RNA sequence: GGGAACGACUCGAGUAGAGUCGAAAAGCUUCAGAUUUAGAAGAAGGUGAAUCAGAGUGCAUUUCUGAGACUUCAACUGAACAAGUUGACGUUUCUCAUGAGACUUCUGACGACGAGUGGGCUGCUGUAAGCGUUCCGUUCGCGGAACGCAAAAGAAACAACAACAACAAC
Reactivity to DMS in 0.01 (KOAc 150mM, MgCl2 10mM, bicine 150mM(pH8.5), 24C), signal-to-noise 5, nucleotides 027 to 129: g000c000u000u000c040a090g020a250u050u060u060a100g010a000a110g030a000a000g040g010u030g030a080a100u020c060a000g020a040g000u030g080c090a080u040u010u070c090u030g040a000g020a000c030u030u010c010a000a030c010u010g030a130a120c170a110a020g010u030u000g000a030c070g020u040u050u010c010u010c060a070u060g060a050g010a080c060u040u050c060u020g020a070c050g000a180c100g000a050g050u060g020g030g010c040u080g040c000u040g010u060a050a050
Reactivity to 2A3 in 0.01 (KOAc 150mM, MgCl2 10mM, bicine 150mM(pH8.5), 24C), signal-to-noise 4, nucleotides 027 to 129: g010c000u040u020c020a070g020a300u090u090u230a050g010a080a000g030a010a010g030g080u110g040a050a060u010c020a020g020a000g070u060g060c140a130u020u110u000c030u030g010a000g000a000c000u000u000c000a010a010c000u000g030a050a050c140a170a000g000u000u000g000a000c010g010u000u150u030c010u000c020a020u230g000a000g040a020c000u050u000c030u060g050a030c000g020a000c010g010a000g020u050g000g030g000c030u040g020c010u020g080u140a080a010